An RNA of 177 nucleotides, treated with 2A3 and DMS and read out base by base. DMS adducts were read by reverse transcription with MarathonRT. Source: RMDB library OK1LIB, as collected in RNAgym. The RNA was probed in 150 mM KOAc, 10 mM MgCl2 and 150 mM bicine (pH 8.5) at 24 C.
[RMDB]
RNA sequence: GGGAACGACUCGAGUAGAGUCGAAAAGCACGUCGUUACGACGACGUGCAAGAAAACAAAAGGAGAGGUGAUGCCGGACCUCAAUGAAUCAAACCGGCAAAAAGCAUGGUGGUACGCCACCAUGCAAUAAUCCACUGCGAUUCGUCGCAGUGGAUUAAAAAGAAACAACAACAACAAC
Reactivity to 2A3 in 0.01 (KOAc 150mM, MgCl2 10mM, bicine 150mM(pH8.5), 24C), signal-to-noise 3, nucleotides 027 to 126: g040c000a000c010g000u010c000g000u000u080a050c300g050a000c000g000a000c010g070u010g020c000a010a000g010a000a090a000a010c120a030a120a040a040g130g060a210g020a000g050g000u020g010a090u100g010c040c000g010g000a020c000c000u010c020a010a180u190g040a020a040u100c060a030a010a110c000c020g000g000c040a020a020a020a020a010g000c000a000u000g030g000u040g000g040u020a000c170g060c080c000a000c000c000a020u000g000c000a000a000
Reactivity to DMS in 0.01 (KOAc 150mM, MgCl2 10mM, bicine 150mM(pH8.5), 24C), signal-to-noise 1, nucleotides 027 to 126: g000c000a000c000g010u000c020g000u030u000a130c170g000a020c020g010a000c000g020u000g070c020a040a050g020a130a090a130a050c210a070a100a090a200g010g000a210g000a000g000g010u000g000a040u030g000c000c000g000g000a000c000c000u000c000a110a010u060g010a030a190u120c140a000a040a000c000c000g010g010c060a060a030a100a160a060g000c020a000u000g000g020u000g050g030u000a090c260g010c000c010a010c000c000a000u000g010c010a000a000